[RMDB]
RNA sequence: GGGAACGACUCGAGUAGAGUCGAAAAAUGAAGCUACUGAAGUGAAAAGCUUGUUUGUAGGCGUUUCAUGGAGGGAAUGUUAAAAUACAAACUGCACUCGGAGAUGCUUAAAUGAAACCAUUUUCGGACAGGGGUUCGAUUCCCCUCGCCUCCACUAGAUCGAAAGCAAGUUCGCUUGCUUUCGAUCAAAAGAAACAACAACAACAAC
Reactivity to 2A3 in 0.01 (KOAc 150mM, MgCl2 10mM, bicine 150mM(pH8.5), 24C), signal-to-noise 1, nucleotides 027 to 156: a000u130g000a050a000g080c050u060a020c020u060g070a050a030g100u080g030a100a120a020a040g010c000u030u030g040u080u020u050g050u050a050g030g000c000g090u010u000u010c040a030u120g020g050a100g000g000g060a000a040u040g000u220u260a090a090a040a070u090a000c030a020a050a000c030u030g010c010a070c070u100c070g100g000a080g000a010u030g010c010u060u050a060a160a060u300g090a080a060a010c000c000a040u030u030u110u120c080g000g060a010c050a010g010g000g000g010u020u070c020g060a020u000u050c000c000c000c000u020c000g000c000c020u020c000c020a020c010u020a080

Chemical mapping of a 207-nucleotide RNA with 2A3. 2A3 adducts were read by reverse transcription with SuperScript II with manganese. The RNA was probed in 150 mM KOAc, 10 mM MgCl2 and 150 mM bicine (pH 8.5) at 24 C. For 2A3, 430 sequencing reads were counted.